An RNA of 177 nucleotides, treated with DMS and 2A3 and read out base by base. The RNA was probed in 150 mM KOAc, 10 mM MgCl2 and 150 mM bicine (pH 8.5) at 24 C. The data come from the RNA Mapping Database (RMDB), library M2PK50.
RNA sequence: GGGAACGACUCGAGUAGAGUCGAAAAUCCAAGGGGUUCGCCCCUUGGAAAAUAAGGGAAACCGAGGAUUCCGGUCGACUCCGGAGAGCCAAAGUCAAAUAAAAACCGUUGGGUUCGCCCAACGGAAUCUAAGAUUAUAGUUCGCUAUAAUCUUAGAAAAAGAAACAACAACAACAAC
Reactivity to DMS in 0.01 (KOAc 150mM, MgCl2 10mM, bicine 150mM(pH8.5), 24C), signal-to-noise 2, nucleotides 027 to 126: u000c000c000a030a020g010g000g010g030u000u000c180g000c000c000c000c000u000u000g000g000a010a010a080a070u000a110a150g000g010g000a140a090a180c030c000g000a230g000g010a200u000u010c000c000g010g000u010c070g000a040c060u010c010c000g000g020a070g010a120g010c080c050a030a050a100g000u000c040a150a080a120u000a080a120a090a170a090c020c010g000u000u010g000g000g010u000u020c270g000c000c000c000a020a030c000g000g000a000a030
Reactivity to 2A3 in 0.01 (KOAc 150mM, MgCl2 10mM, bicine 150mM(pH8.5), 24C), signal-to-noise 1, nucleotides 027 to 126: u000c000c010a000a020g000g000g000g010u000u080c170g110c000c000c000c000u000u000g010g010a000a000a010a020u020a030a030g070g000g030a130a050a000c010c010g010a070g000g050a110u050u080c010c010g030g030u060c130g100a060c050u070c180c010g040g000a100g040a020g070c000c010a030a040a000g040u030c010a020a100a070u180a100a100a010a050a070c000c000g020u010u000g000g000g010u030u060c270g080c000c000c000a000a000c000g000g000a000a010